An RNA of 177 nucleotides, treated with DMS and 2A3 and read out base by base. DMS adducts were read by reverse transcription with MarathonRT. For DMS, 2,432 sequencing reads were counted. Values cover nucleotides 27 to 126. The RNA was probed in 150 mM KOAc, 10 mM MgCl2 and 150 mM bicine (pH 8.5) at 24 C. The 2A3 profile rests on 1,732 reads.
RNA sequence: GGGAACGACUCGAGUAGAGUCGAAAAUUUGUGGGUGACGGGGAGGAUGGAGGCAGGAGGCACCUGAGGCCACCAGAUAUGAGUAGGUGUCUGGCUCUUUUCUGGUCAGUCACCUGUCAUCCUAAACAACAACAGGAAGGUUCGCCUUCCUGUUGUUAAAAGAAACAACAACAACAAC
Reactivity to DMS in 0.01 (KOAc 150mM, MgCl2 10mM, bicine 150mM(pH8.5), 24C), signal-to-noise 2, nucleotides 027 to 126: u000u010u000g020u010g020g020g010u010g000a050c090g020g010g000g000a070g010g030a070u000g000g010a080g030g040c090a090g010g000a100g020g020c080a070c040c030u000g000a110g000g000c030c050a070c050c020a080g000a080u000a040u010g010a080g010u010a020g010g040u000g000u000c010u010g000g020c010u000c080u000u000u000u000c080u000g010g000u000c080a060g010u000c020a020c010c000u000g020u000c020a030u000c030c030u010a060a070a080c150
Reactivity to 2A3 in 0.01 (KOAc 150mM, MgCl2 10mM, bicine 150mM(pH8.5), 24C), signal-to-noise 1, nucleotides 027 to 126: u070u030u100g110u070g000g020g010u030g000a030c030g010g010g050g010a060g080g000a030u070g040g050a030g030g000c030a010g060g040a020g020g060c060a040c040c030u070g000a080g100g070c030c010a000c030c010a040g040a040u080a070u130g020a020g110u100a010g060g020u030g010u060c040u010g050g000c010u020c010u100u100u060u020c030u020g000g010u020c030a030g000u010c010a030c000c010u010g000u000c010a030u000c000c000u070a080a060a040c070